[RMDB]
The record gives the reactivity of an RNA of 177 nucleotides to DMS and 2A3.

RNA sequence: GGGAACGACUCGAGUAGAGUCGAAAAGCCUUACGAUUCGUCGUAAGGCAUACAAAGUUUUGGCACUAUGAGCCCGCAGCGUUGGUGCUCCCACGCCGUGCAAUACGACGGAUUUCGAUCCGUCGAAAGUUGCUAAUGGUUUCGACCAUUAGCAACUAAAAGAAACAACAACAACAAC
Reactivity to DMS in 0.01 (KOAc 150mM, MgCl2 10mM, bicine 150mM(pH8.5), 24C), signal-to-noise 3, nucleotides 027 to 126: g010c000c000u010u000a010c010g000a020u000u010c180g030u000c000g000u000a000a000g000g030c000a010u000a040c150a110a070a110g010u000u010u000u000g000g010c020a070c140u000a110u010g000a070g000c010c010c050g020c110a070g000c040g000u010u010g020g010u010g020c180u010c060c010c050a100c050g000c010c030g020u020g010c090a080a090u010a130c040g000a000c000g010g010a010u010u000u000c090g010a040u000c000c000g030u000c000g000a010a040
Reactivity to 2A3 in 0.01 (KOAc 150mM, MgCl2 10mM, bicine 150mM(pH8.5), 24C), signal-to-noise 3, nucleotides 027 to 126: g000c000c000u010u010a000c010g020a030u010u080c190g030u000c000g010u160a000a020g000g000c000a000u040a000c010a000a120a020g000u010u020u120u160g070g000c020a020c050u150a120u300g050a050g050c000c020c020g030c030a070g000c030g050u140u190g010g040u070g060c030u100c000c010c000a020c030g010c010c000g050u040g050c010a070a130u090a140c010g000a000c000g000g000a010u060u050u120c130g080a010u000c010c000g000u000c000g000a010a010
The DMS profile rests on 2,594 reads. Source: RMDB library M2PK50, as collected in RNAgym. For DMS the reverse transcriptase was MarathonRT. Conditions: 150 mM KOAc, 10 mM MgCl2 and 150 mM bicine (pH 8.5), 24 C.